[RMDB]
RNA sequence: GGGAACGACUCGAGUAGAGUCGAAAAGAUAUGGAAGUUUGGUUGUCAGCCUAGACUCGGAAACGAGUCAUAGGCUUGGAUUUACCAUGCUUCCUAAGUCAAAGCCGUGGUGUUCGCACCACGGCAACAUUCAAGCAUGGUUCGCCAUGCUUGAAUGAAAAGAAACAACAACAACAAC
Reactivity to 2A3 in 0.01 (KOAc 150mM, MgCl2 10mM, bicine 150mM(pH8.5), 24C), signal-to-noise 3, nucleotides 027 to 126: g010a010u060a030u180g010g000a000a020g000u000u040u050g030g010u030u030g060u090c060a000g000c000c000u010a000g000a000c000u000c010g010g030a080a080a040c010g010a010g020u000c030a060u020a000g020g000c000u000u100g010g000a000u210u100u080a010c000c000a000u000g000c000u000u000c000c000u000a100a000g030u000c060a120a080a070g000c000c000g000u000g000g030u010g040u080u190c300g050c120a000c000c000a000c000g000g000c000a000a000
Reactivity to DMS in 0.01 (KOAc 150mM, MgCl2 10mM, bicine 150mM(pH8.5), 24C), signal-to-noise 4, nucleotides 027 to 126: g010a050u000a300u010g000g000a010a000g000u000u000u000g010g000u000u000g010u000c030a050g010c000c000u000a020g000a010c000u000c000g000g000a090a120a270c000g020a020g010u000c010a080u000a000g020g010c010u000u000g000g010a030u010u010u000a020c010c010a020u000g000c000u000u010c000c000u000a030a070g000u000c050a130a140a160g010c000c000g040u000g000g040u000g020u010u020c290g020c000a020c000c000a010c000g000g010c000a000a030
Structure probing data (2A3 and DMS) for a 177-nucleotide construct. The RNA was probed in 150 mM KOAc, 10 mM MgCl2 and 150 mM bicine (pH 8.5) at 24 C. 2A3 adducts were read by reverse transcription with SuperScript II with manganese. As a SHAPE reagent, 2A3 marks flexible, mostly unpaired nucleotides at the ribose 2'-OH. It was measured as part of the RMDB library TTRDES. Reactivities are given for positions 27 through 126.